Structure probing data (DMS and 2A3) for a 177-nucleotide construct. High 2A3 reactivity points to a flexible backbone, as in loops and unpaired stretches. DMS adducts were read by reverse transcription with MarathonRT. The 2A3 profile rests on 2,148 reads. The reactions ran in a buffer of 150 mM KOAc, 10 mM MgCl2 and 150 mM bicine (pH 8.5), at 24 C. It was measured as part of the RMDB library OK2TRN.
RNA sequence: GGGAACGACUCGAGUAGAGUCGAAAAUGAUGUCGUAACCGGUGAUAUCACCACUAUCCAGUCGUUACGCCAUACCUCCGAUCUUGAUACCGGAGAGAUGUAUGUCUUCCUGUGUAAGGUUGAAGCCCGAAUAAAAUCUCUUCGGAGAUUUUAUUCGAAAAGAAACAACAACAACAAC
Reactivity to DMS in 0.01 (KOAc 150mM, MgCl2 10mM, bicine 150mM(pH8.5), 24C), signal-to-noise 4, nucleotides 027 to 126: u020g010a030u000g000u000c000g010u000a000a020c020c020g010g020u020g000a040u000a020u010c080a100c260c190a080c290u000a000u000c010c010a090g010u010c160g010u010u000a000c020g000c060c000a030u000a100c150c010u010c030c000g010a010u000c020u000u010g010a080u000a030c000c080g010g010a040g000a020g000a020u000g010u020a030u020g010u000c020u000u000c000c010u000g020u000g000u000a040a030g000g010u000u000g000a060a110g000c070c090
Reactivity to 2A3 in 0.01 (KOAc 150mM, MgCl2 10mM, bicine 150mM(pH8.5), 24C), signal-to-noise 2, nucleotides 027 to 126: u070g030a000u010g020u040c000g000u010a020a000c000c000g010g030u300g040a030u020a010u160c100a070c110c000a060c040u020a020u030c010c020a030g150u240c030g000u060u010a000c010g010c020c000a040u060a120c000c010u010c030c010g030a030u000c020u060u090g140a030u060a050c020c020g010g000a070g020a000g010a110u050g140u300a110u300g040u000c000u010u030c020c010u010g000u000g010u030a020a000g020g000u000u030g020a060a020g050c010c070